Record summary:
Structure probing data (2A3) for a 207-nucleotide construct.
RNA sequence: GGGAACGACUCGAGUAGAGUCGAAAACACCCUUUCGAGGGUGGUGGUGAUAUGGAUCCUCCGACGAUGAAACCAACUCCCCACCUCCGAUCGGAAACGAUCGGAGAGGUUGGUGGAGUCGAGAGGAUCCUAAGUCGAAUUGUAGGUUCGCCUACAACCGUCAUCUAUGGUUCGCCAUAGAUGACGGAAAAGAAACAACAACAACAAC
Reactivity to 2A3 in 0.01 (KOAc 150mM, MgCl2 10mM, bicine 150mM(pH8.5), 24C), signal-to-noise 1, nucleotides 027 to 156: c020a030c000c000c020u010u110u070c300g140a020g000g020g010u030g040g020u100g060g110u220g040a030u030a030u090g000g000a000u000c010c010u000c040c000g010a010c010g220a300u010g020a000a000a000c010c000a010a010c050u170c050c030c000c050a050c020c000u000c000c000g000a000u000c000g020g000a040a020a000c000g020a020u000c000g050g000a000g000a000g000g000u030u000g000g040u010g000g000a000g000u030c010g050a190g000a000g040g000a000u000c000c000u000a010a000g010u020c040g010a060a120u010u020g020u000a000g020g070u070u070c180g070c090c010u070a010c020a000a010

The RNA was probed in 150 mM KOAc, 10 mM MgCl2 and 150 mM bicine (pH 8.5) at 24 C. For 2A3, 1,305 sequencing reads were counted.